[RMDB]
RNA sequence: GGGAACGACUCGAGUAGAGUCGAAAAGUCAGUGAGGUAUUGGCAUAAGAAUAGACGUAUAAAUCAAUGGAAUAAAAUUGAGAGUCCAGGAGUAAGUCUUAGCAUUUAUGGUCAAUUGAUUUUCAACAAAGGACCAAGACAAUUUAAUCAUGAUAGAGAAAAUUAGCUGAUUCGUCAGCUAAUUUUCAAAAGAAACAACAACAACAAC
Reactivity to 2A3 in 0.01 (KOAc 150mM, MgCl2 10mM, bicine 150mM(pH8.5), 24C), signal-to-noise 4, nucleotides 027 to 156: g090u080c040a010g030u000g100a070g020g030u070a090u080u060g020g000c040a060u060a110a050g040a070a050u070a070g050a020c020g090u130a050u090a250a070a030u080c040a020a050u050g020g040a080a060u140a150a100a090a040u110u060g020a060g000a000g050u000c020c020a020g010g010a030g040u070a110a010g020u040c000u050u070a010g000c000a050u050u130u060a070u150g020g010u020c020a040a030u000u000g030a040u060u060u110u160c050a050a050c020a020a070a060g110g000a000c000c020a000a000g040a010c010a020a040u080u140u190a130a070u090c030a010u110g120a040u180a130g100a010
Reactivity to DMS in 0.01 (KOAc 150mM, MgCl2 10mM, bicine 150mM(pH8.5), 24C), signal-to-noise 2, nucleotides 027 to 156: g010u000c050a060g030u000g020a070g020g040u000a080u000u020g020g040c030a090u000a100a120g000a100a160u020a100g010a050c050g030u020a170u010a050a080a110u000c030a030a100u020g020g040a130a090u010a030a050a070a140u000u000g010a230g000a070g000u020c010c020a180g000g000a110g020u000a030a090g020u000c020u000u020a070g000c070a120u000u000u000a070u000g020g000u000c040a070a080u020u000g000a120u020u010u010u000c050a030a040c070a040a100a100g030g000a050c040c020a020a120g020a050c020a040a120u000u000u000a080a080u010c050a050u000g000a100u000a100g000a300
The record gives the reactivity of an RNA of 207 nucleotides to 2A3 and DMS. The reactions ran in a buffer of 150 mM KOAc, 10 mM MgCl2 and 150 mM bicine (pH 8.5), at 24 C. For DMS the reverse transcriptase was MarathonRT. For 2A3 the reverse transcriptase was SuperScript II with manganese. The data come from the RNA Mapping Database (RMDB), library OK3TST.